[RMDB]
RNA sequence: GGGAACGACUCGAGUAGAGUCGAAAAGAAAAUAAAAAGCGGGUAAGUCGAAAGACGUAGGUCGUAAGUAUAUCGUAAAUAAGACCGUACAGGAAACUGGUAGAUAUACGUAACCGCGUAUAAGAAAGGGAUAUAGUUAGUUCGCUAACUAUAUCCCAAAAGAAACAACAACAACAAC
Reactivity to 2A3 in 0.01 (KOAc 150mM, MgCl2 10mM, bicine 150mM(pH8.5), 24C), signal-to-noise 3, nucleotides 027 to 126: g020a010a040a000a000u160a010a060a020a010a000g020c030g040g050g100u170a100a150g080u100c040g020a050a090a110g030a010c020g010u040a120g020g050u070c060g090u040a140a040g010u010a000u010a000u000c060g030u080a040a180a100u200a150a020g040a100c020c020g000u030a060c080a010g030g010a040a110a000c010u020g000g010u020a020g020a000u010a000u000a000c030g010u080a050a000c010c010g000c000g070u040a050u030a180a060g200a120a060a020
Reactivity to DMS in 0.01 (KOAc 150mM, MgCl2 10mM, bicine 150mM(pH8.5), 24C), signal-to-noise 6, nucleotides 027 to 126: g010a110a090a090a090u040a040a100a080a120a190g000c020g010g000g010u010a080a120g000u000c010g000a110a100a120g010a020c010g010u010a090g030g020u000c030g010u000a060a100g010u000a000u000a010u010c000g010u010a060a060a090u000a040a080g000a060c000c000g000u030a090c130a070g010g000a070a080a090c010u000g000g010u010a140g000a010u000a010u000a000c000g000u020a080a080c030c020g000c010g020u020a050u030a070a080g010a060a080a080

Structure probing data (2A3 and DMS) for a 177-nucleotide construct. The RNA was probed in 150 mM KOAc, 10 mM MgCl2 and 150 mM bicine (pH 8.5) at 24 C. DMS adducts were read by reverse transcription with MarathonRT.